[RMDB]
RNA sequence: GGGAACGACUCGAGUAGAGUCGAAAAUUGCAAGCCUUCGGGCUUGCAAGGUGUCGGAAUGCGGAAUAUAUAAUCCUCCGGUUAAGGAUUAUACCGACUUAAGUGCCAGGCUGUUCGCAGCCUGGAAUUGCCUACACGUAUUCGUACGUGUAGGCAAAAAAGAAACAACAACAACAAC
Reactivity to DMS in 0.01 (KOAc 150mM, MgCl2 10mM, bicine 150mM(pH8.5), 24C), signal-to-noise 2, nucleotides 027 to 126: u000u000g000c000a000a000g020c000c000u000u010c220g030g020g010c000u000u000g030c000a000a020g020g020u000g000u000c020g000g010a160a090u000g010c100g000g000a170a060u010a290u000a000u000a000a040u000c000c000u000c150c010g040g030u030u000a150a030g000g000a000u000u000a020u000a080c010c000g000a040c030u010u000a120a080g010u010g000c000c000a020g000g000c000u000g040u000u000c220g010c010a020g000c000c010u000g000g000a030a020